[RMDB]
RNA sequence: GGGAACGACUCGAGUAGAGUCGAAAAGUUAUUUCCAGGAUGGGCUUUAAACUCGAUGCAACAGUUCCUGGAUAUCCUAAGCUUUUCAUUACUCGUGAAGAGGCUGUAAGGCAAGUUCGAAGCUGGACACUGCCUUCAGUUUCGACUGAAGGCAGUGAAAAGAAACAACAACAACAAC
Reactivity to DMS in 0.01 (KOAc 150mM, MgCl2 10mM, bicine 150mM(pH8.5), 24C), signal-to-noise 1, nucleotides 027 to 126: g020u000u000a090u010u000u010c000c030a000g000g030a040u000g040g000g030c050u000u000u000a160a050a120c070u030c140g000a090u010g020c080a080a150c100a150g020u010u000c000c020u020g010g010a000u000a040u000c050c020u000a070a070g010c020u010u000u000u000c020a060u010u020a100c120u020c080g000u020g030a060a120g030a050g010g030c100u000g020u040a070a000g010g030c060a120a040g000u000u010c020g040a110a140g020c050u020g000g000a300